[RMDB]
RNA sequence: GGGAACGACUCGAGUAGAGUCGAAAACAGAGUGGAUGUCUAAGCCCAAACUGGUGUCCAGGGUGACGGCGGGCGAAGAAUUCAUCCUCAGCGUCCCCGGCUCGUCGUAAAAGGCGACUAAAGGGUGCGGGAUACCAUAUUUCGAUAUGGUAUCCCGAAAAGAAACAACAACAACAAC
Reactivity to 2A3 in 0.01 (KOAc 150mM, MgCl2 10mM, bicine 150mM(pH8.5), 24C), signal-to-noise 6, nucleotides 027 to 126: c030a010g120a020g090u070g020g010a020u030g040u170c010u050a030a070g020c000c000c000a100a090a050c090u150g120g030u120g110u120c040c060a180g120g050g070u280g070a020c040g030g080c050g010g010g010c030g010a030a000g030a030a030u120u090c010a020u050c020c010u050c030a030g040c020g040u070c000c000c000c010g000g050c070u010c010g010u000c000g010u040a020a090a090a060g040g000c010g000a000c010u070a030a030a100g030g020g020u060g030
Reactivity to DMS in 0.01 (KOAc 150mM, MgCl2 10mM, bicine 150mM(pH8.5), 24C), signal-to-noise 4, nucleotides 027 to 126: c090a100g010a080g040u000g020g000a000u000g000u020c020u010a030a300g020c010c000c010a060a180a140c120u010g030g000u070g000u010c010c040a180g010g000g000u030g010a030c050g010g030c170g010g010g040c010g030a140a020g000a070a080u020u020c040a020u000c060c000u000c030a070g000c100g020u010c060c000c010c110g000g030c150u010c010g000u000c000g000u030a080a090a130a150g000g010c020g000a030c080u020a060a100a120g000g010g010u040g000